[RMDB]
This 177-nucleotide RNA was probed chemically with DMS and 2A3.
Reactivities are given for positions 27 through 126.
For 2A3 the reverse transcriptase was SuperScript II with manganese.
Source: RMDB libraries RFM100 and RFMREP, as collected in RNAgym.

RNA sequence: GGGAACGACUCGAGUAGAGUCGAAAAGGCAUCAGAAGAAGCCAUUGACUUGUCAGGCGUUUUUCUGAUCUCCAGAUUUCAUGUUGCGGACAGUUCCUGCUCGCACCAGGGCCGGUCGGGAAACUCCCUGUAUAUGUAGAUUCGUCUACAUAUACAGAAAAGAAACAACAACAACAAC
Reactivity to DMS in 0.01 (KOAc 150mM, MgCl2 10mM, bicine 150mM(pH8.5), 24C), signal-to-noise 9, nucleotides 027 to 126: g010g020c300a030u000c000a000g010a010a020g010a020a100g000c000c000a150u020u010g010a030c050u010u010g010u000c020a090g000g000c010g010u010u000u000u000u000c000u000g000a010u000c060u000c010c020a140g010a140u010u010u010c070a080u010g010u010u000g000c020g000g000a050c060a060g000u000u010c080c020u000g010c040u000c060g020c060a040c120c040a060g010g000g010c140c060g000g000u000c030g000g010g010a060a080a100c100u000c040c050
Reactivity to 2A3 in 0.01 (KOAc 150mM, MgCl2 10mM, bicine 150mM(pH8.5), 24C), signal-to-noise 9, nucleotides 027 to 126: g040g000c030a010u000c000a010g010a020a000g020a010a000g000c010c010a120u070u150g040a070c060u130u250g070u170c040a030g010g070c130g160u000u000u000u020u000c000u010g000a010u000c010u000c020c000a060g070a220u070u110u100c080a070u140g050u060u060g060c030g010g020a020c030a050g020u090u100c010c010u030g020c010u010c020g030c020a080c030c030a070g020g020g000c030c020g020g010u040c020g010g010g000a030a050a030c030u030c000c010